[RMDB]
RNA sequence: GGGAACGACUCGAGUAGAGUCGAAAACACUAGCUUUAGAAGCUGUAACUGGCUUUAGGAGCUGUACCUCUUACAGCAAUGUAAGAGGGAUACCUAGCAGAGUCAGUGAUACCUAGCAGAGCUAGAAGAUAAUGUAUACUUUCGAGUGUACAUUAUCAAAAGAAACAACAACAACAAC
Reactivity to 2A3 in 0.01 (KOAc 150mM, MgCl2 10mM, bicine 150mM(pH8.5), 24C), signal-to-noise 9, nucleotides 027 to 126: c030a010c000u000a000g010c000u050u060u060a100g050a200a020g030c010u010g010u010a060a040c000u000g010g010c000u070u050u060a110g050g050a060g020c040u020g040u040a030c000c000u000c000u000u000a000c000a010g010c030a050a130u020g000u000a000a000g000a000g000g000g000a010u030a020c010c040u030a020g030c040a020g020a000g030u000c000a000g000u010g040a030u050a090c030c060u030a010g000c010a010g000a000g000c000u000a000g020a040a000
Reactivity to DMS in 0.01 (KOAc 150mM, MgCl2 10mM, bicine 150mM(pH8.5), 24C), signal-to-noise 9, nucleotides 027 to 126: c070a290c000u000a000g010c000u000u000u010a110g020a130a080g010c090u010g010u010a140a030c010u010g000g000c000u000u000u000a090g010g010a160g010c130u020g010u020a120c000c000u000c000u000u000a000c000a010g000c300a090a100u000g010u000a010a000g000a010g000g000g000a050u040a040c110c020u000a040g010c170a130g010a010g010u000c000a000g000u000g000a110u040a050c240c090u010a050g010c090a100g000a010g000c000u000a010g000a110a100
An RNA of 177 nucleotides, treated with 2A3 and DMS and read out base by base. High 2A3 reactivity points to a flexible backbone, as in loops and unpaired stretches. Values cover nucleotides 27 to 126. The RNA was probed in 150 mM KOAc, 10 mM MgCl2 and 150 mM bicine (pH 8.5) at 24 C. For 2A3 the reverse transcriptase was SuperScript II with manganese.